Source: RMDB library OK2TRN, as collected in RNAgym. This 177-nucleotide RNA was probed chemically with DMS and 2A3. Values cover nucleotides 27 to 126. For DMS, 1,927 sequencing reads were counted. For 2A3 the reverse transcriptase was SuperScript II with manganese.

RNA sequence: GGGAACGACUCGAGUAGAGUCGAAAAGUUAUUAGGGGGCAAUGGAUGGAAGGUGUUGAUCCUAAAACGGUCAUCAAUGAGCUUGAUGAAUUGUGGUUGGGAAUUAAUCAUAUCAUGUGGGAGAAUGACGUAGGUUGAAGUUCGCUUCAACCUACGUAAAAGAAACAACAACAACAAC
Reactivity to DMS in 0.01 (KOAc 150mM, MgCl2 10mM, bicine 150mM(pH8.5), 24C), signal-to-noise 2, nucleotides 027 to 126: g000u000u000a110u000u000a110g000g000g010g010g010c120a110a050u000g010g000a130u010g000g000a090a060g020g010u000g020u000u010g010a090u000c000c020u000a020a070a070a050c130g000g010u000c000a010u000c000a040a050u000g010a180g040c250u000u000g000a030u000g010a040a060u000u000g010u000g000g000u010u000g020g010g020a140a080u000u000a050a110u010c070a060u000a080u010c040a050u000g000u000g000g010g000a130g010a050a040u010g010
Reactivity to 2A3 in 0.01 (KOAc 150mM, MgCl2 10mM, bicine 150mM(pH8.5), 24C), signal-to-noise 1, nucleotides 027 to 126: g020u060u040a150u160u280a190g020g000g000g040g000c000a060a060u040g000g010a000u040g060g050a030a010g010g020u060g030u060u060g000a040u040c010c000u070a000a070a000a000c030g050g000u010c010a010u000c010a000a020u220g060a040g220c050u010u000g000a000u050g000a040a120u120u030g000u010g010g160u020u070g000g020g010a020a000u100u070a150a000u100c050a000u070a010u160c070a010u080g060u060g070g060g010a100g000a040a050u130g020